[RMDB]
RNA sequence: GGGAACGACUCGAGUAGAGUCGAAAAGACCGCAGAAGCGGAAACGGCGAAAACGUGCGGAAGAAUACGCACGAGCGGAAGACUGGAUAGCGACCGAGAGGUCGCCACGCCGAAUAAUCCAGAAGAACGUAUUAAUCGCAUUCGUGCGAUUAAUACGAAAAGAAACAACAACAACAAC
Reactivity to DMS in 0.01 (KOAc 150mM, MgCl2 10mM, bicine 150mM(pH8.5), 24C), signal-to-noise 3, nucleotides 027 to 126: g010a160c000c010g010c000a190g020a100a130g030c040g000g030a040a080a180c020g010g030c020g000a180a030a090a110c010g000u000g020c030g000g030a070a120g010a220a100u020a060c000g000c030a000c010g000a110g000c140g020g000a110a050g000a140c050u010g000g010a010u000a080g000c020g000a000c010c000g000a200g000a210g030g030u000c000g010c000c060a000c060g010c000c000g000a070a070u030a060a030u000c000c000a020g000a150a060g000a110a150
Reactivity to 2A3 in 0.01 (KOAc 150mM, MgCl2 10mM, bicine 150mM(pH8.5), 24C), signal-to-noise 5, nucleotides 027 to 126: g040a020c010c010g000c020a090g070a300a030g040c010g020g030a090a040a010c010g000g000c010g050a060a020a000a070c020g000u000g010c000g010g040a120a090g140a080a160u280a070c000g000c000a000c000g020a010g050c070g040g070a050a020g070a090c000u000g010g010a010u020a020g010c000g000a010c000c000g030a040g000a020g080g010u000c000g000c010c000a010c010g020c000c000g000a020a010u090a050a010u020c010c010a010g030a040a050g050a130a020

The record gives the reactivity of an RNA of 177 nucleotides to DMS and 2A3. The reactions ran in a buffer of 150 mM KOAc, 10 mM MgCl2 and 150 mM bicine (pH 8.5), at 24 C.